[RMDB]
An RNA of 177 nucleotides, treated with DMS and 2A3 and read out base by base. Reactivities are rounded to 0.1 and cut off at 0 and 3. It was measured as part of the RMDB library TTRDES. For DMS the reverse transcriptase was MarathonRT.
RNA sequence: GGGAACGACUCGAGUAGAGUCGAAAAGAUAUGGACGCUGAGUGGCUCAACAGCUUCUGUAUCGGAAACGAUAUGAAGACAUGAGCGCAGCGUCCUAAGUCAAAACUAUGCAGUUCGCUGCAUAGAAGUGGUGUUAUUUGUUCGCAAAUAACACCACAAAAGAAACAACAACAACAAC
Reactivity to DMS in 0.01 (KOAc 150mM, MgCl2 10mM, bicine 150mM(pH8.5), 24C), signal-to-noise 3, nucleotides 027 to 126: g000a010u000a010u010g000g010a020c000g030c000u000g000a050g050u010g050g000c000u000c010a140a060c230a130g000c000u000u000c000u000g070u000a020u010c010g030g010a020a030a040c020g020a020u010a030u000g000a030a020g000a050c070a300u010g030a020g010c020g020c020a000g010c010g010u000c000c000u000a000a030g000u000c010a110a070a130a230c000u000a000u010g010c000a010g010u000u010c240g020c000u000g010c000a000u010a000g000a130a070
Reactivity to 2A3 in 0.01 (KOAc 150mM, MgCl2 10mM, bicine 150mM(pH8.5), 24C), signal-to-noise 5, nucleotides 027 to 126: g010a000u030a010u050g010g010a000c000g000c010u010g030a090g140u300g300g000c020u000c080a290a290c120a270g010c000u000u010c030u150g090u050a030u020c010g000g000a010a010a000c000g000a010u010a000u110g020a000a000g030a020c170a300u300g000a000g000c010g000c000a000g010c000g000u020c000c000u000a000a000g000u000c000a000a000a020a060c000u030a000u010g000c000a010g020u070u160c230g110c170u010g000c010a010u010a000g020a120a020